Chemical mapping of a 177-nucleotide RNA with DMS and 2A3. DMS adducts were read by reverse transcription with MarathonRT. The DMS profile rests on 10,681 reads.
[RMDB]
RNA sequence: GGGAACGACUCGAGUAGAGUCGAAAAGCGCAAUAUCUCGAUAAGGCAGGUCGAGCGUCUGAUCGAGGACCACACCGACGCGCGUGGUCUCGGCUUCCUGGGCGAGCGCGCGGUGAACGUGCUCAGGGACUAUUUCCGUAUUCGUACGGAAAUAGUCAAAAGAAACAACAACAACAAC
Reactivity to DMS in 0.01 (KOAc 150mM, MgCl2 10mM, bicine 150mM(pH8.5), 24C), signal-to-noise 7, nucleotides 027 to 126: g000c040g020c050a130a100u010a090u010c010u000c010g010a030u000a070a030g000g010c010a100g010g020u010c090g000a110g020c130g000u000c010u000g010a040u000c010g010a030g010g010a100c100c100a170c050a050c040c010g010a130c090g010c040g010c000g010u010g010g010u010c010u000c090g020g000c130u000u000c060c010u010g010g000g010c040g020a110g000c010g010c000g020c000g010g020u000g010a100a110c140g010u000g000c000u010c050a100g000g010
Reactivity to 2A3 in 0.01 (KOAc 150mM, MgCl2 10mM, bicine 150mM(pH8.5), 24C), signal-to-noise 6, nucleotides 027 to 126: g010c040g010c050a060a080u080a130u200c010u000c010g020a030u030a080a030g040g000c030a020g010g140u130c070g060a040g050c030g020u000c020u040g030a050u030c020g010a010g010g030a020c050c020a050c020a020c050c030g300a300c030g030c010g010c010g050u080g070g020u010c010u030c020g050g020c060u100u070c040c020u040g020g030g000c030g050a080g010c000g000c000g000c000g010g020u060g040a090a030c050g040u040g000c000u020c060a040g100g010